[RMDB]
RNA sequence: GGGAACGACUCGAGUAGAGUCGAAAAUGAAAUAGCGUGUGCAAGACGCUGAUCUUGCCAUGAUCUGGAACUUUAGUGCUGAGGUCGGAGUUCCAGGGUAUCAUGUCGGACCUUAGCACUAAUUAAACCUGCAGUCCUAGUUCGCUAGGACUGCAGGAAAAGAAACAACAACAACAAC
Reactivity to 2A3 in 0.01 (KOAc 150mM, MgCl2 10mM, bicine 150mM(pH8.5), 24C), signal-to-noise 1, nucleotides 027 to 126: u140g040a070a000a030u130a060g030c000g020u030g060u060g000c020a010a000g010a010c020g080c300u200g150a300u010c000u020u000g000c010c010a000u010g010a050u030c040u040g090g000a010a030c010u090u040u040a050g010u040g100c020u030g000a000g040g000u020c020g070g020a050g000u140u040c050c030a020g080g000g000u150a100u240c050a040u140g130u090c070g090g010a000c000c000u000u000a000g020c000a000c000u010a010a090u180u140a080a000a060

This 177-nucleotide RNA was probed chemically with 2A3. The 2A3 profile rests on 801 reads.